Overview: The data come from the RNA Mapping Database (RMDB), library OK1LIB. The record gives the reactivity of an RNA of 177 nucleotides to 2A3 and DMS.
RNA sequence: GGGAACGACUCGAGUAGAGUCGAAAAGAAUAUAAGAGCGUCUUCGCGUCUUGACGUGAAUGAGCCUAGACUGUAGGGUCUAGUGGGAUAGUAACGCUCACUCACAAAACGCUAUUCCACAUGAAGAAUGGAGUAGGAUAUUCGUAUCCUACUCCAUAAAAGAAACAACAACAACAAC
Reactivity to 2A3 in 0.01 (KOAc 150mM, MgCl2 10mM, bicine 150mM(pH8.5), 24C), signal-to-noise 9, nucleotides 027 to 126: g060a060a060u210a010u070a150a040g010a000g000c010g030u010c000u020u000c000g000c000g010u020c090u120u240g090a020c010g010u010g010a020a030u060g000a020g030c010c010u010a010g010a030c010u060g160u300a090g170g090g020u000c000u010a030g000u030g010g000g010a000u000a020g020u020a030a010c000g000c010u020c020a030c020u180c010a100c050a040a100a070a020c090g000c000u000a000u010u000c000c000a020c020a080u170g080a090a110g090a060
Reactivity to DMS in 0.01 (KOAc 150mM, MgCl2 10mM, bicine 150mM(pH8.5), 24C), signal-to-noise 8, nucleotides 027 to 126: g010a130a110u040a090u020a060a090g000a020g000c000g000u000c040u000u010c020g010c010g000u000c040u050u030g010a010c040g010u010g000a020a010u020g000a100g010c110c050u000a010g010a010c010u010g010u040a100g020g000g010u000c020u010a050g010u010g000g010g010a020u000a010g010u000a090a050c060g000c010u010c010a080c080u020c140a100c200a080a060a090a080c120g000c000u000a010u000u010c000c000a030c100a140u050g020a120a090g020a160
Values are in units of 0.01, from 0 to 300, in steps of 10.